[RMDB]
RNA sequence: GGGAACGACUCGAGUAGAGUCGAAAAUCCCAAAGGUUGCCGAAUCCGAAAGGUAGGGAGGAACCGCUUUUUGGGGUUAAUCUGCAGUGAAGCUGCAGUAGGGAUACCUUCUGUCCCGCACCCGACAGCUAACUCCACAGGCAAUAAAGGAAGGAGACGGUAUUUAGUAGUUCGCUACUAAAUACCGAAAAGAAACAACAACAACAAC
Reactivity to 2A3 in 0.01 (KOAc 150mM, MgCl2 10mM, bicine 150mM(pH8.5), 24C), signal-to-noise 2, nucleotides 027 to 156: u020c000c000c010a030a050a040g050g000u020u010g000c010c000g020a050a060u100c010c010g030a120a030a040g010g030u070a020g000g050g000a010g020g040a110a130c100c050g020c050u090u110u040u080u180g040g000g000g000u010u030a030a000u020c000u000g000c020a010g000u080g230a130a020g120c000u000g010c010a010g000u000a000g000g000g000a000u070a090c010c000u030u050c020u020g010u000c000c010c010g000c020a040c000c000c000g010a040c040a010g010c010u020a010a040c000u010c000c010a060c070a070g000g000c000a000a010u080a040a080a010g020g000a010a000g030g000a040g020a010
Reactivity to DMS in 0.01 (KOAc 150mM, MgCl2 10mM, bicine 150mM(pH8.5), 24C), signal-to-noise 2, nucleotides 027 to 156: u000c000c000c000a110a180a160g040g000u000u000g000c020c040g020a180a280u000c050c010g010a100a180a130g000g040u000a100g030g000g030a210g050g010a130a080c050c060g010c090u000u000u070u010u000g030g000g020g020u010u000a070a080u000c000u010g000c010a010g010u000g020a120a230g020c000u020g040c030a040g020u000a130g030g020g000a040u000a060c030c080u000u000c040u000g040u040c160c000c000g000c100a090c000c010c000g000a110c100a050g020c030u000a110a200c020u010c030c040a100c060a140g000g000c010a090a090u010a020a110a130g010g000a080a090g020g060a300g000a180
The record gives the reactivity of an RNA of 207 nucleotides to 2A3 and DMS. The reactions ran in a buffer of 150 mM KOAc, 10 mM MgCl2 and 150 mM bicine (pH 8.5), at 24 C.